An RNA of 177 nucleotides, treated with 2A3 and DMS and read out base by base. Reactivities are given for positions 27 through 126. It was measured as part of the RMDB library TTRINS.
RNA sequence: GGGAACGACUCGAGUAGAGUCGAAAAGAUAUGGAUUUCGGAUAAGCUUUGAUCUAUGUGCAUGGGUCCUAUAUCGGAAACGAUAUAGGACUCCGUUAUGCAUAGGGAGCUUACGAAAUCCUAAGUCGACAGAUUCUAUCUUCGGAUAGAAUCUGUCAAAAGAAACAACAACAACAAC
Reactivity to 2A3 in 0.01 (KOAc 150mM, MgCl2 10mM, bicine 150mM(pH8.5), 24C), signal-to-noise 1, nucleotides 027 to 126: g060a010u110a070u170g030g000a000u010u000u030c060g040g140a240u130a270a000g000c000u300u300u240g040a030u110c000u020a000u020g040u020g030c130a180u190g060g000g000u000c000c010u040a020u000a020u000c000g010g010a020a030a030c010g000a000u000a000u000a000g000g000a000c000u050c010c010g000u010u090a120u150g000c000a000u010a000g000g040g000a010g000c020u020u010a010c000g000a000a000a000u000c000c000u020a030a020g220u060c110
Reactivity to DMS in 0.01 (KOAc 150mM, MgCl2 10mM, bicine 150mM(pH8.5), 24C), signal-to-noise 1, nucleotides 027 to 126: g020a120u010a290u020g000g000a000u000u000u000c000g000g000a220u010a010a000g000c000u000u010u010g000a060u020c000u000a000u000g020u000g040c270a030u000g010g020g020u000c010c000u000a000u000a010u000c000g000g000a130a060a210c000g000a010u000a010u000a010g010g000a010c000u000c000c090g010u000u000a080u010g000c020a010u000a020g010g000g010a000g030c000u000u000a060c010g010a010a000a000u000c000c000u000a020a090g000u000c100